[RMDB]
The record gives the reactivity of an RNA of 207 nucleotides to DMS and 2A3. DMS adducts were read by reverse transcription with MarathonRT. Values cover nucleotides 27 to 156. The reactions ran in a buffer of 150 mM KOAc, 10 mM MgCl2 and 150 mM bicine (pH 8.5), at 24 C. For 2A3 the reverse transcriptase was SuperScript II with manganese.

RNA sequence: GGGAACGACUCGAGUAGAGUCGAAAAGUACGACAACUUAUUACGCAUCUUCGUACGAUGGAUGCUAAGAUUAGUGGCGAAAGCCACAAGCACGGGCAUUCAUAAGUCAGAUCCGAGAGGAUUUGACGUCCUAGCCUGUGCAAGACUAGGUCAGACAAAUAAUGCGUAUGUUCGCAUACGCAUUAUUAAAAGAAACAACAACAACAAC
Reactivity to DMS in 0.01 (KOAc 150mM, MgCl2 10mM, bicine 150mM(pH8.5), 24C), signal-to-noise 6, nucleotides 027 to 156: g020u000a080c030g030a100c080a090a110c060u010u000a110u000u010a140c160g020c040a080u000c040u000u000c030g000u010a060c080g010a120u000g010g010a050u000g020c020u000a050a060g010a120u000u000a110g030u000g020g010c010g010a150a120a230g020c000c010a010c010a020a100g010c030a050c040g020g000g010c010a100u000u000c040a050u000a060a120g020u000c000a020g000a010u000c010c000g010a290g000a300g020g000a020u010u000u000g010a010c010g000u010c030c040u000a100g010c000c010u000g020u000g020c060a050a020g030a080c040u000a040g010g010u000c040a160g010a140c100a090
Reactivity to 2A3 in 0.01 (KOAc 150mM, MgCl2 10mM, bicine 150mM(pH8.5), 24C), signal-to-noise 7, nucleotides 027 to 156: g080u060a020c040g030a000c060a130a040c070u120u130a070u150u090a110c110g010c010a030u010c010u080u050c040g070u110a100c110g040a050u120g040g000a000u010g010c020u030a020a020g030a100u080u170a030g000u000g010g000c020g040a090a010a010g000c010c000a010c020a010a010g000c010a000c010g000g000g000c010a030u030u070c040a040u190a200a030g010u000c000a000g000a010u000c000c000g030a030g000a020g020g000a000u000u000u000g000a000c000g010u000c000c020u030a030g000c000c000u010g000u020g020c010a000a010g020a020c060u080a020g070g030u040c030a010g020a110c060a020